RNA sequence: GGGAACGACUCGAGUAGAGUCGAAAAUAUCGACCCCGGCGCUAUUGAAUACCCGUGUAUGGCGUUGCUGACACGGACGAGCACUGCCAUGUCGGGCGGUGUUUCAAGCCCUAGCGUGGGCUAGAAAAGUCUCUGGUCGUUUCGACGAUCAGGGGCUAAAAGAAACAACAACAACAAC
Reactivity to 2A3 in 0.01 (KOAc 150mM, MgCl2 10mM, bicine 150mM(pH8.5), 24C), signal-to-noise 5, nucleotides 027 to 126: u170a020u050c020g050a000c010c000c000c000g040g000c000g000c010u040a050u050u220g070a100a080u120a130c000c000c000g010u010g000u010a260u080g020g000c070g100u030u220g000c010u010g010a010c000a010c020g050g030a020c050g010a000g000c000a000c010u000g000c000c000a070u170g100u100c080g030g010g000c010g010g000u010g010u020u120u050c020a030a010g020c000c000c000u010a010g000c010g020u040g010g000g000c000u010a010g020a010a060a000
Reactivity to DMS in 0.01 (KOAc 150mM, MgCl2 10mM, bicine 150mM(pH8.5), 24C), signal-to-noise 3, nucleotides 027 to 126: u030a210u000c100g000a300c190c000c000c000g000g000c070g000c090u000a050u000u000g000a300a300u090a070c070c000c000g020u010g000u000a060u000g000g010c030g010u020u040g000c010u000g000a040c010a010c000g000g000a050c090g000a100g000c000a010c000u000g010c000c000a110u020g010u030c210g010g000g020c020g010g010u000g020u010u000u010c040a070a080g010c010c020c020u000a040g000c050g040u010g000g000g000c000u000a040g010a070a060a080

Conditions: 150 mM KOAc, 10 mM MgCl2 and 150 mM bicine (pH 8.5), 24 C. Structure probing data (2A3 and DMS) for a 177-nucleotide construct. For 2A3, 10,786 sequencing reads were counted.